[RMDB]
RNA sequence: GGGAACGACUCGAGUAGAGUCGAAAAUUACCGCCCAGGAUGGGGUGCAGCGUUCCUGCAAUAUCCAGGGCACCUAGGUGCAGCCUUGUAGUUUUAGUGGACUUUAGGCUAAAGAAUUUCCCUAGCAAAAAUCUUUAAGGGUUCGCCCUUAAAGAAAGUUAGUUGCUAACUUCGGUUAGCAACUAACAAAAGAAACAACAACAACAAC
Reactivity to 2A3 in 0.01 (KOAc 150mM, MgCl2 10mM, bicine 150mM(pH8.5), 24C), signal-to-noise 1, nucleotides 027 to 156: u100u000a050c010c010g060c000c010c000a000g000g000a000u000g050g040g070g150u090g040c040a070g030c050g080u150u150c030c000u000g000c000a010a010u060a030u130c000c000a000g000g000g000c030a030c000c030u010a040g020g020u020g040c010a000g020c010c000u070u100g100u150a070g030u030u010u090u060a140g060u210g030g000a020c000u130u110u020a000g000g000c040u070a060a050a000g090a040a020u070u090u110c040c000c000u030a010g000c010a060a160a160a120a220u010c000u020u000u000a000a000g000g000g000u010u060c030g060c000c020c000u000u000a000a000a000g030a000a000a000

The record gives the reactivity of an RNA of 207 nucleotides to 2A3. For 2A3 the reverse transcriptase was SuperScript II with manganese. The 2A3 profile rests on 626 reads. Conditions: 150 mM KOAc, 10 mM MgCl2 and 150 mM bicine (pH 8.5), 24 C.